Background
Structure probing data (DMS and 2A3) for a 177-nucleotide construct. The data come from the RNA Mapping Database (RMDB), library M2PK50. The 2A3 profile rests on 1,650 reads. The reactions ran in a buffer of 150 mM KOAc, 10 mM MgCl2 and 150 mM bicine (pH 8.5), at 24 C.
[RMDB]
RNA sequence: GGGAACGACUCGAGUAGAGUCGAAAAACGACACAAUUCGUUGUGUCGUAAUGGAAAAGGCUAGGACCGGCCAGACAAAGGUCCGAAAAGAUCCAAAGAUCACACGCCACGAAUUCGUUCGUGGCAACAUUCCAGAGUCGUUCGCGACUCUGGAAUGAAAAGAAACAACAACAACAAC
Reactivity to DMS in 0.01 (KOAc 150mM, MgCl2 10mM, bicine 150mM(pH8.5), 24C), signal-to-noise 1, nucleotides 027 to 126: a000c000g000a000c000a000c000a030a000u000u010c170g010u000u020g000u000g000u000c000g000u000a000a020u010g010g000a140a110a070a170g020g010c020u000a110g040g000a000c000c000g060g000c000c000a130g000a110c240a000a080a160g000g000u000c000c020g000a020a040a070a100g030a010u000c010c100a130a090a110g020a020u010c000a130c160a080c110g000c000c000a010c030g020a000a020u010u010c190g000u000u000c000g030u000g010g000c030a050a050
Reactivity to 2A3 in 0.01 (KOAc 150mM, MgCl2 10mM, bicine 150mM(pH8.5), 24C), signal-to-noise 2, nucleotides 027 to 126: a000c000g020a000c000a000c030a000a010u100u060c220g050u100u000g000u000g000u000c000g000u000a020a070u120g000g000a040a050a220a250g020g000c020u070a090g050g000a000c000c000g020g010c030c010a010g030a040c110a030a130a020g000g000u000c000c000g000a010a000a000a050g020a000u000c070c090a190a070a060g010a000u010c000a020c020a000c200g000c020c000a000c020g010a000a030u070u050c190g040u060u000c000g010u040g010g000c000a000a000